[RMDB]
An RNA of 177 nucleotides, treated with DMS and 2A3 and read out base by base. Source: RMDB library OK1LIB, as collected in RNAgym.
RNA sequence: GGGAACGACUCGAGUAGAGUCGAAAACCUGCGUGAGGGGUUGUAAAUGGCGCUGCGACCCACGUCUAGACGCAAAUGAUCUAGAGAUUGAUCACGUAGCGUCGCGGUUGGCCCUUCCGGCCGCGGGUCAUGGUACGCGCUUCGGUGCGUGCCAUGAAAAAGAAACAACAACAACAAC
Reactivity to DMS in 0.01 (KOAc 150mM, MgCl2 10mM, bicine 150mM(pH8.5), 24C), signal-to-noise 9, nucleotides 027 to 126: c000c000u000g010c020g010u030g010a040g010g000g010g020u010u000g000u000a060a160a160u020g020g000c010g000c020u000g020c010g000a140c130c020c080a060c250g000u000c010u000a010g000a010c040g010c260a100a130a120u040g000a100u000c000u000a010g000a050g010a120u010u030g000a060u020c120a110c020g010u000a030g000c010g020u000c000g010c030g000g000u010u010g000g010c060c020c030u000u010c020c170g010g010c180c030g010c010g000g000g000
Reactivity to 2A3 in 0.01 (KOAc 150mM, MgCl2 10mM, bicine 150mM(pH8.5), 24C), signal-to-noise 6, nucleotides 027 to 126: c000c000u000g010c000g010u050g010a020g000g010g010g000u000u010g080u090a060a100a080u140g010g010c020g000c010u010g000c010g010a070c000c000c020a020c020g170u000c010u020a000g000a000c010g010c100a020a050a170u220g030a080u000c000u010a010g010a000g010a100u030u130g020a030u060c020a010c060g010u010a000g010c000g020u010c000g000c010g020g010u040u040g010g000c000c000c000u030u020c000c000g030g000c010c010g000c000g000g010g010